[RMDB]
RNA sequence: GGGAACGACUCGAGUAGAGUCGAAAAGGGCAGAGCAGGAAAAAAAUGCGCUGGCGCAGGCCGACGGAAACGACGCUGACGACUGGCGCACGGCCUUUCGUGCAGCCGGUGGUGUCCUGAGCGACGAACGUGUGUAACGGUUCGCCGUUACACACGUAAAAGAAACAACAACAACAAC
Reactivity to DMS in 0.01 (KOAc 150mM, MgCl2 10mM, bicine 150mM(pH8.5), 24C), signal-to-noise 3, nucleotides 027 to 126: g000g000g000c010a030g010a090g030c030a060g040g040a000a010a010a090a080a100a100u000g010c050g020c010u000g010g000c040g000c130a080g000g010c060c020g010a100c120g010g010a080a050a140c040g020a130c080g020c010u000g000a090c040g000a050c010u000g000g000c010g000c030a010c030g000g010c270c140u000u010u010c010g030u010g010c010a110g040c010c020g020g020u010g000g010u000g020u000c020c070u000g000a080g010c060g000a080c100g010a100
Reactivity to 2A3 in 0.01 (KOAc 150mM, MgCl2 10mM, bicine 150mM(pH8.5), 24C), signal-to-noise 1, nucleotides 027 to 126: g040g000g020c030a010g000a010g030c020a030g100g000a030a070a070a010a000a030a030u080g000c040g010c050u030g060g000c040g000c000a020g050g060c040c020g010a030c010g040g010a020a110a020c040g050a010c050g040c050u020g030a100c040g020a070c010u020g000g000c000g010c000a000c010g040g000c030c040u060u150u070c010g060u030g030c040a060g010c020c020g040g030u010g010g030u080g000u030c000c040u040g070a040g000c020g030a020c010g020a060